[RMDB]
RNA sequence: GGGAACGACUCGAGUAGAGUCGAAAAUUUCUUCUACUUUAUGUCUCAGAAGGCAAAGCCUUGUACACUUUUACUGCGGCGCUUUCGAAUGCUGUGUACUAGAUUCUCUCAACGUUGGAGUGGCAUCUGCACUCGUAUGAUUCGUCAUACGAGUGCAAAAAGAAACAACAACAACAAC
Reactivity to DMS in 0.01 (KOAc 150mM, MgCl2 10mM, bicine 150mM(pH8.5), 24C), signal-to-noise 1, nucleotides 027 to 126: u000u090u000c060u000u000c090u000a120c130u030u000u000a090u000g000u000c020u000c030a300g020a030a010g000g030c100a100a130a260g000c050c060u000u000g060u000a100c080a050c140u010u000u060u080a100c010u000g000c090g070g000c170g010c160u000u010u020c000g000a120a080u000g000c000u000g000u040g030u020a010c100u000a060g000a040u040u000c010u000c000u000c100a060a110c100g010u000u000g050g000a300g000u050g000g030c130a190u030c220
Reactivity to 2A3 in 0.01 (KOAc 150mM, MgCl2 10mM, bicine 150mM(pH8.5), 24C), signal-to-noise 1, nucleotides 027 to 126: u030u010u030c010u060u090c020u000a130c080u170u040u200a170u170g080u010c000u000c000a170g080a160a000g000g000c040a130a260a080g000c000c000u000u060g010u100a050c020a000c080u040u090u230u230a060c040u120g100c020g000g000c100g010c080u040u130u060c000g110a120a140u140g020c030u020g000u000g000u040a040c020u030a010g100a180u050u000c000u000c000u000c010a010a260c090g010u040u150g010g000a030g050u100g050g000c020a090u000c000